Chemical mapping of a 177-nucleotide RNA with 2A3 and DMS. The data come from the RNA Mapping Database (RMDB), library OK1LIB.
RNA sequence: GGGAACGACUCGAGUAGAGUCGAAAACGUGACCUCUUCCGAAAGGCACGGAGUGCAAGAAACGUUAGCAAGACACGAAGAGCCGUGCAACAACGUGACACUAACUAUGGAAAGUCGCAGGACACGAAAAUAUAUUAAAAUUCGUUUUAAUAUAUUUAAAAGAAACAACAACAACAAC
Reactivity to 2A3 in 0.01 (KOAc 150mM, MgCl2 10mM, bicine 150mM(pH8.5), 24C), signal-to-noise 8, nucleotides 027 to 126: c020g020u020g060a060c000c000u020c020u080u000c010c020g100a120a060a030g080g000c010a000c030g030g040a080g040u140g070c070a070a060g040a160a130a000c060g030u040u030a020g030c090a110a040g080a090c020a010c080g060a080a040g020a020g130c040c020g010u030g000c020a070a080c010a030a030c030g030u040g070a020c010a010c130u110a140a010c020u030a080u110g030g010a030a040a020g020u030c020g000c040a030g040g050a020c020a000c120g050a030
Reactivity to DMS in 0.01 (KOAc 150mM, MgCl2 10mM, bicine 150mM(pH8.5), 24C), signal-to-noise 7, nucleotides 027 to 126: c050g020u000g000a090c010c000u010c030u010u000c020c030g010a120a110a090g010g000c020a010c020g000g000a100g010u020g000c130a070a110g010a080a090a080c130g010u000u000a060g030c130a120a100g010a150c030a020c020g000a130a130g010a140g000c030c030g000u010g010c020a070a090c140a060a100c040g010u000g000a100c100a130c040u000a030a030c030u010a100u020g000g000a040a080a130g000u010c030g010c080a070g000g010a100c070a030c040g000a130
Source information
Conditions: 150 mM KOAc, 10 mM MgCl2 and 150 mM bicine (pH 8.5), 24 C.